[RMDB]
RNA sequence: GGGAACGACUCGAGUAGAGUCGAAAAUAAAAACGACUAUGAACUAAUGGAGCCUCGAUUUGCGGACGAAACUGAUGUUGAAGCUACUGUUGGAGUGCUUGAAGAAGACGCAACAGACCGAGAACGUCGUAUCCAAGAACGUAUUGCAGAAAAAGAACCCCUAAAUAGCAUUCGUGCUAUUUAGGGGAAAAGAAACAACAACAACAAC
Reactivity to 2A3 in 0.01 (KOAc 150mM, MgCl2 10mM, bicine 150mM(pH8.5), 24C), signal-to-noise 2, nucleotides 027 to 156: u080a020a060a040a000a010c070g070a040c050u070a050u240g100a120a060c020u050a100a030u080g050g010a020g020c000c000u000c010g070a050u000u010u190g030c060g010g030a050c030g080a100a040a060c040u050g010a040u050g060u070u100g020a030a000g040c050u080a030c010u080g040u030u020g050g050a160g020u070g080c010u020u020g000a060a000g040a060a010g030a000c020g010c020a010a070c030a010g030a010c010c110g030a010g020a070a010c050g010u040c010g020u020a070u040c030c000a040a010g010a030a010c030g020u080a030u050u120g030c020a000g060a070a020a060a010a010g290a030a010
Reactivity to DMS in 0.01 (KOAc 150mM, MgCl2 10mM, bicine 150mM(pH8.5), 24C), signal-to-noise 1, nucleotides 027 to 156: u000a060a100a060a050a100c040g000a090c040u010a140u020g000a120a130c030u010a090a060u020g020g020a120g010c010c000u010c020g020a090u000u020u000g000c110g030g020a200c060g010a100a020a120c040u000g040a090u020g010u000u000g000a120a010g000c030u000a120c040u000g020u020u000g040g000a090g020u000g030c020u000u040g020a070a090g020a080a170g000a050c020g000c030a050a110c020a070g010a110c020c020g010a120g000a030a050c030g080u000c000g030u000a220u000c010c050a030a150g010a030a010c020g020u020a100u000u010g000c020a120g020a060a060a150a130a120g020a060a300